[RMDB]
RNA sequence: GGGAACGACUCGAGUAGAGUCGAAAAAUCGUAUUGGGCUACAGCUCUUGACAACACCUCUGUCCGUGACGAUGAGUUAUCCAUCCCGCCGGGAACGGGAAGCGUAGCCUGUUUCUACUCUGCUCUUCGUUGGCAAGUGAUUCGUCACUUGCCAACGAAAAGAAACAACAACAACAAC
Reactivity to 2A3 in 0.01 (KOAc 150mM, MgCl2 10mM, bicine 150mM(pH8.5), 24C), signal-to-noise 3, nucleotides 027 to 126: a000u240c130g000u110a150u110u190g010g000g000c000u040a040c030a100g040c000u040c000u020u110g060a040c050a080a030c010a120c030c020u060c070u070g050u030c010c000g080u080g120a040c050g030a040u080g000a000g110u090u170a040u050c040c010a010u000c000c000c000g030c020c020g070g000g030a090a050c000g010g000g050a080a010g030c000g000u000a000g000c000c000u000g000u000u000u010c000u000a010c000u010c000u030g000c000u000c000u020u010
This 177-nucleotide RNA was probed chemically with 2A3.
The RNA was probed in 150 mM KOAc, 10 mM MgCl2 and 150 mM bicine (pH 8.5) at 24 C.